Chemical mapping of a 207-nucleotide RNA with 2A3.
The 2A3 profile rests on 443 reads.
The RNA was probed in 150 mM KOAc, 10 mM MgCl2 and 150 mM bicine (pH 8.5) at 24 C.
Source: RMDB library OK3TST, as collected in RNAgym.
[RMDB]
RNA sequence: GGGAACGACUCGAGUAGAGUCGAAAAAGGGUUUGGUCGGGAGAAGGGUAAACCAUUUGGGGAUGUUCUUUGAUUUGUAGGCUGGAUUGGGUCUCUUAGAGUAGAAGUUCGGUCCCUGGGUGACCCAACUUGAAGAGUUUCGUUAAACUUUCAGGUACGAUACCGAAAAUUUCGAUUUUCGGUAUCGAAAAGAAACAACAACAACAAC
Reactivity to 2A3 in 0.01 (KOAc 150mM, MgCl2 10mM, bicine 150mM(pH8.5), 24C), signal-to-noise 1, nucleotides 027 to 156: a000g110g010g000u090u060u000g000g030u070c020g050g000g030a090g030a050a090g070g020g000u050a030a050a070c110c020a090u160u090u090g010g010g010g020a030u010g010u160u050c040u110u070u020g110a190u100u020u070g100u130a030g000g040c030u030g040g020a160u080u060g050g000g060u030c010u000c000u120u050a040g000a040g130u030a040g050a140a060g030u050u050c050g040g010u000c010c010c000u000g000g000g040u020g020a020c010c010c000a010a000c000u000u040g030a020a010g020a030g170u020u020u080c050g010u120u260a000a090a000c000u020u140u100c130a020g010g120u150a030